[RMDB]
RNA sequence: GGGAACGACUCGAGUAGAGUCGAAAAGGAGGCUGUGAGUAACAACGAUAACCUCCCCCGGUGAUUCGAUGGAGCGCCGCAAGGCGAGCCGAUGAAUUGCCGAGAAGCCUGGCUCGAAAUCGUCGACACAGUUUCGAUAGUUCGCUAUCGAAACUGUAAAAGAAACAACAACAACAAC
Reactivity to DMS in 0.01 (KOAc 150mM, MgCl2 10mM, bicine 150mM(pH8.5), 24C), signal-to-noise 2, nucleotides 027 to 126: g040g060a010g000g030c050u010g000u010g000a300g000u030a080a070c300a070a000c000g000a230u010a170a160c020c010u000c000c000c100c130c000g000g040u000g000a000u000u000c000g050a170u050g030g000a030g000c000g000c000c010g010c300a060a070g000g010c030g000a000g000c000c010g000a060u090g010a000a010u010u000g000c000c010g010a110g000a100a170g000c050c010u070g000g020c000u000c080g000a060a060a160u000c020g000u000c000g010a230c060
Reactivity to 2A3 in 0.01 (KOAc 150mM, MgCl2 10mM, bicine 150mM(pH8.5), 24C), signal-to-noise 3, nucleotides 027 to 126: g050g000a010g000g030c070u060g050u050g160a040g150u150a060a060c090a050a040c060g030a060u030a110a060c010c000u000c000c000c010c020c000g020g010u020g000a010u030u000c050g030a030u200g000g000a010g010c000g000c000c010g060c100a020a020g000g000c000g000a010g000c000c000g000a020u050g030a010a030u040u020g030c000c000g010a030g020a030a000g010c010c030u010g010g060c000u010c000g040a050a060a100u060c050g010u030c050g130a020c020